The record gives the reactivity of an RNA of 207 nucleotides to DMS and 2A3. For 2A3 the reverse transcriptase was SuperScript II with manganese.
RNA sequence: GGGAACGACUCGAGUAGAGUCGAAAAGUUAGGUGAGGCUCCUAUGCAAACACAGGCCACUUCCCAAAAAUGUCCAAAGACGCCAAUGGGUAGAACAGGGAUUGUCGGAUUAAGGCUUUCCAUAAUGAAAACAAAGUAUGCUUCGGCAUACUUUGAACAUUCCAGAAAUGUUCGCAUUUCUGGAAUGAAAAGAAACAACAACAACAAC
Reactivity to DMS in 0.01 (KOAc 150mM, MgCl2 10mM, bicine 150mM(pH8.5), 24C), signal-to-noise 2, nucleotides 027 to 156: g010u020u000a080g000g050u010g000a100g030g030c020u010c010c060u000a070u000g020c030a100a090a110c040a130c060a090g000g000c040c010a090c050u000u040c000c010c020a020a050a120a140a100u010g000u000c040c020a070a160a170g010a090c080g000c020c050a060a180u000g040g000g000u010a110g020a090a090c030a120g000g020g000a070u010u000g000u000c010g000g020a120u000u000a060a100g030g010c040u000u000u010c020c030a070u010a060a080u000g020a120a060a130a160c000a000a010a010g010u000a000u000g020c000u000u000c300g060g000c010a010u010a010c000u010u010u000g000a020a120
Reactivity to 2A3 in 0.01 (KOAc 150mM, MgCl2 10mM, bicine 150mM(pH8.5), 24C), signal-to-noise 2, nucleotides 027 to 156: g020u070u070a060g010g010u030g040a070g000g040c020u020c040c020u080a030u200g040c050a090a080a050c080a020c020a140g070g010c020c010a040c040u010u040c040c000c000a120a000a000a000a000u020g020u040c010c000a070a080a050g050a020c040g020c020c010a040a080u080g000g000g070u080a040g000a130a030c080a110g070g050g020a040u000u070g040u050c000g040g010a040u110u120a100a060g010g000c000u030u040u030c030c000a040u060a110a120u200g080a010a020a050a120c010a000a000a010g010u000a000u010g000c010u000u050c120g060g010c000a000u000a000c000u010u000u000g000a000a000
For 2A3, 1,016 sequencing reads were counted. The RNA was probed in 150 mM KOAc, 10 mM MgCl2 and 150 mM bicine (pH 8.5) at 24 C. It was measured as part of the RMDB library M2RFPK.